Structure probing data (2A3 and DMS) for a 177-nucleotide construct. For DMS, 660 sequencing reads were counted. Conditions: 150 mM KOAc, 10 mM MgCl2 and 150 mM bicine (pH 8.5), 24 C. High DMS reactivity at an A or C suggests that its Watson-Crick edge is free. Values are in units of 0.01, from 0 to 300, in steps of 10. Values cover nucleotides 27 to 126. For DMS the reverse transcriptase was MarathonRT.
RNA sequence: GGGAACGACUCGAGUAGAGUCGAAAAAAUCCUUCUACAUCAUUAGUAUUGUUAAAGAUUAUUCUCCCAUAUCGCUCAAAGGAGAUAGUCUUCCCUCGCGUUCCGCCCGAGUCUUGCAUUCCCACCUCAUUUACCUCUACUUCGGUAGAGGUAAAUGAAAAGAAACAACAACAACAAC
Reactivity to 2A3 in 0.01 (KOAc 150mM, MgCl2 10mM, bicine 150mM(pH8.5), 24C), signal-to-noise 2, nucleotides 027 to 126: a000a000u060c020c000u050u060c030u050a040c020a130u130c020a090u100u160a050g120u130a070u130u170g050u080u150a120a080a010g000a000u020u000a030u160u110c020u040c020c000c000a050u080a030u180c160g000c060u070c140a090a120a060g040g000a020g010a010u020a020g000u010c010u010u040c000c000c000u020c030g040c010g060u050u030c010c030g020c010c010c000g010a000g000u010c000u000u050g030c020a030u010u000c000c010c010a030c000c020u020
Reactivity to DMS in 0.01 (KOAc 150mM, MgCl2 10mM, bicine 150mM(pH8.5), 24C), signal-to-noise 1, nucleotides 027 to 126: a090a020u000c020c030u000u010c080u010a040c010a050u010c040a150u010u000a100g010u000a090u000u000g020u020u000a070a030a080g040a010u000u000a050u050u030c000u000c010c000c090a190u020a100u000c120g020c050u000c020a030a220a120g030g000a040g010a000u000a000g010u000c000u000u000c040c000c020u000c090g010c040g080u000u000c010c040g000c020c000c000g000a040g000u010c010u010u000g010c100a110u000u010c000c010c000a090c260c180u000